[RMDB]
RNA sequence: GGGAACGACUCGAGUAGAGUCGAAAAGAUAUGGAGUUGAACUACGCUAAAACAGGUCGUUGAAAUCUGUCUUCUCGGAAACGAGAAGACAGAUGGAGACCUGGAGUACGGCGCAACUCCUAAGUCAUCUAAUGAUAUACUUCGGUAUAUCAUUAGAAAAAGAAACAACAACAACAAC
Reactivity to 2A3 in 0.01 (KOAc 150mM, MgCl2 10mM, bicine 150mM(pH8.5), 24C), signal-to-noise 5, nucleotides 027 to 126: g040a000u060a050u180g000g000a010g020u030u000g030a160a050c150u250a060c300g000c060u110a010a030a090a070c000a010g000g020u010c030g170u300u280g180a180a160a010u000c000u000g000u000c000u000u000c000u010c000g000g000a080a050a050c000g000a000g000a010a000g000a000c000a000g010a000u000g000g010a030g000a000c000c000u000g000g000a020g040u020a030c090g010g010c020g000c010a000a000c000u010c000c000u010a090a010g030u030c020a060
Reactivity to DMS in 0.01 (KOAc 150mM, MgCl2 10mM, bicine 150mM(pH8.5), 24C), signal-to-noise 7, nucleotides 027 to 126: g010a030u010a300u010g010g010a020g010u010u000g000a130a090c150u020a300c020g000c030u000a020a140a210a190c000a000g000g010u010c000g010u000u010g010a150a170a020u000c000u000g000u000c000u000u000c000u000c000g000g000a070a060a160c000g010a010g010a010a010g000a010c000a000g010a000u000g000g010a150g000a010c000c000u000g000g010a030g010u000a080c300g000g000c060g000c010a010a010c010u000c000c000u000a020a080g010u000c030a150